The record gives the reactivity of an RNA of 207 nucleotides to 2A3. The 2A3 profile rests on 555 reads. The reactions ran in a buffer of 150 mM KOAc, 10 mM MgCl2 and 150 mM bicine (pH 8.5), at 24 C.
RNA sequence: GGGAACGACUCGAGUAGAGUCGAAAAGGCAAUAACGAACUAAUUCUACGCAAGUAAUGGAGAAAUGCCAGGGUCACUAUCUAGCCAUAAUAGUGCUUGACAGUAUGAUACUAACUGAACAAUAAGUAAAAGCGCUGGUACUUCGGUACCAGCGCAAGAAUUCUUAGGUCUUCGGACCUAAGAAUUCAAAAGAAACAACAACAACAAC
Reactivity to 2A3 in 0.01 (KOAc 150mM, MgCl2 10mM, bicine 150mM(pH8.5), 24C), signal-to-noise 1, nucleotides 027 to 156: g040g000c060a070a180u230a220a040c020g080a000a010c050u070a100a080u060u030c030u140a050c060g030c050a050a060g000u110a060a090u090g050g040a060g000a050a080a000u120g000c040c040a010g050g000g000u020c020a010c030u030a020u030c030u050a040g050c000c030a000u050a170a000u020a110g040u050g020c010u010u020g000a000c000a010g020u030a050u090g010a000u020a030c020u010a000a130c020u020g060a050a000c010a030a080u080a100a000g020u020a050a120a060a080g000c010g000c000u040g040g000u000a000c000u020u060c080g080g000u000a000c000c000a000g030c000g000c000a020a020